[RMDB]
RNA sequence: GGGAACGACUCGAGUAGAGUCGAAAACAUGGGCUGGUGAUUAGCUACGGAGGGUGACAUGAGUCAAGGUGACAUAAUUCACUUCACCAGUCAGGCAUUAUGGCUGGUGCUAGUCCUUUCAAUGCCGAACACCCUGCAUGUUCGCAUGCAGGGUGUUAAAAGAAACAACAACAACAAC
Reactivity to DMS in 0.01 (KOAc 150mM, MgCl2 10mM, bicine 150mM(pH8.5), 24C), signal-to-noise 2, nucleotides 027 to 126: c060a140u000g020g010g020c020u000g040g000u000g000a040u000u000a030g040c070u000a100c200g000g010a080g020g020g020u020g000a050c140a080u010g000a140g010u000c040a070a100g000g030u020g010a020c100a030u000a140a080u000u000c050a030c030u020u010c000a010c040c000a010g000u000c000a010g060g020c140a050u000u010a110u000g010g000c000u010g000g010u010g020c050u010a020g010u010c020c040u000u000u000c180a070a040u000g000c020c050g020
Reactivity to 2A3 in 0.01 (KOAc 150mM, MgCl2 10mM, bicine 150mM(pH8.5), 24C), signal-to-noise 2, nucleotides 027 to 126: c010a030u060g040g080g000c040u010g020g000u080g030a050u120u000a000g000c000u030a060c020g040g000a040g030g010g000u020g020a010c030a050u100g050a030g010u040c070a090a090g170g060u100g020a000c010a060u220a020a040u110u040c010a020c000u030u030c000a010c000c000a000g010u010c000a000g050g020c050a060u110u140a100u300g000g010c020u010g000g000u000g010c010u040a020g040u060c000c000u030u060u060c050a060a060u150g020c000c000g010
Chemical mapping of a 177-nucleotide RNA with DMS and 2A3.
The RNA was probed in 150 mM KOAc, 10 mM MgCl2 and 150 mM bicine (pH 8.5) at 24 C.